[RMDB]
RNA sequence: GGGAACGACUCGAGUAGAGUCGAAAACCUAGAAUUUUAAAUGGGCAAUCCUGAGCCAAAUCCUUCUUUCCGAAAACAAAAAACUAAAAGUUCAGAAAAAAAGGAUAGGUGCAGAGACUCAAUGGAACUUUGUAACAUCAUUCGUGAUGUUACAAAGAAAAGAAACAACAACAACAAC
Reactivity to 2A3 in 0.01 (KOAc 150mM, MgCl2 10mM, bicine 150mM(pH8.5), 24C), signal-to-noise 4, nucleotides 027 to 126: c000c000u030a060g110a110a090u080u090u160u260a080a190a130u130g000g000g000c030a030a060u050c010c010u020g010a020g000c000c000a010a100a130u000c010c000u020u020c010u030u020u000c020c020g110a040a070a050a010c130a040a110a070a090a060a050c080u230a120a110a050a100g040u030u010c020a000g050a010a050a000a010a010a010a000g010g000a000u000a020g000g010u020g020c010a000g070a030g020a080c010u000c020a010a120u060g110g010a050a020
Reactivity to DMS in 0.01 (KOAc 150mM, MgCl2 10mM, bicine 150mM(pH8.5), 24C), signal-to-noise 3, nucleotides 027 to 126: c010c010u000a080g000a170a050u030u070u020u030a070a090a120u000g010g000g000c050a070a120u030c070c000u000g000a240g000c050c040a030a080a110u010c000c000u010u000c160u000u000u000c020c010g010a040a020a100a080c100a010a100a090a150a100a090c230u030a060a080a100a080g040u010u000c010a120g000a000a000a010a030a130a010a010g000g000a020u000a050g020g000u010g030c010a020g020a060g020a070c020u000c040a040a030u010g010g000a060a130